This 177-nucleotide RNA was probed chemically with DMS.
For DMS, 1,196 sequencing reads were counted.
DMS (dimethyl sulfate) methylates the pairing face of unpaired adenines and cytosines.
The reactions ran in a buffer of 150 mM KOAc, 10 mM MgCl2 and 150 mM bicine (pH 8.5), at 24 C.
DMS adducts were read by reverse transcription with MarathonRT.
[RMDB]
RNA sequence: GGGAACGACUCGAGUAGAGUCGAAAACUGUUUAUCAAAAGCACAGGACUAUGCAAAAUCGAAAGAUGAAGUAUAUGGUCUGACACCUGCCCGGUGCUGGAAGGUUAAAAGGAGUAGUUAUCUUCGGCUUUACCCUAGUGUUCGCACUAGGGUAAAGAAAAGAAACAACAACAACAAC
Reactivity to DMS in 0.01 (KOAc 150mM, MgCl2 10mM, bicine 150mM(pH8.5), 24C), signal-to-noise 2, nucleotides 027 to 126: c040u020g020u010u010u020a050u000c050a090a150a180a040g010c050a060c050a110g010g020a040c050u030a020u000g000c000a040a130a190a020u000c020g000a130a090a170g020a020u000g000a050a220g000u000a060u020a050u010g020g020u000c030u010g010a050c170a050c100c060u000g010c040c000c000g020g050u000g000c020u000g000g020a170a060g010g010u000u010a050a040a070a060g000g000a150g000u000a070g000u000u000a090u010c030u000u000c120g000g010